[RMDB]
The data come from the RNA Mapping Database (RMDB), library OK2TRN.
This 177-nucleotide RNA was probed chemically with DMS and 2A3.
Values cover nucleotides 27 to 126.
High DMS reactivity at an A or C suggests that its Watson-Crick edge is free.
RNA sequence: GGGAACGACUCGAGUAGAGUCGAAAAGAGAUGGCGCCUUCCUCGCAGGGCAGAGGAUCACGCGGGUUGCGGGAGGUGUAGCGCAGGCGGCGGCUGCGGGCCUGGGCCCUCGGCCCCACUGACCCUAGGUCCGUAAAUAUUUCGAUAUUUACGGACCAAAAGAAACAACAACAACAAC
Reactivity to DMS in 0.01 (KOAc 150mM, MgCl2 10mM, bicine 150mM(pH8.5), 24C), signal-to-noise 2, nucleotides 027 to 126: g020a130g010a110u030g040g000c030g000c040c070u010u030c030c010u010c040g040c060a090g030g020g020c040a150g000a080g040g010a030u010c120a090c130g000c020g020g010g010u000u010g030c080g010g010g000a050g000g010u010g010u000a100g010c100g020c030a020g000g020c100g030g000c160g070g000c000u010g020c300g020g000g010c000c080u010g030g000g010c010c020c000u000c030g000g000c020c030c020c010a010c020u000g000a190c020c010c010u020a130
Reactivity to 2A3 in 0.01 (KOAc 150mM, MgCl2 10mM, bicine 150mM(pH8.5), 24C), signal-to-noise 1, nucleotides 027 to 126: g100a020g030a060u160g110g050c020g000c000c010u000u050c030c020u040c030g000c030a050g070g010g000c070a010g000a060g180g000a150u090c070a060c170g030c010g010g150g070u140u160g000c060g010g010g000a040g010g010u030g000u080a030g000c090g000c020a030g030g000c100g050g000c130g030g000c000u000g000c000g020g000g020c000c070u180g170g300g000c020c010c000u000c020g000g000c000c050c020c010a020c000u060g030a050c010c020c020u050a060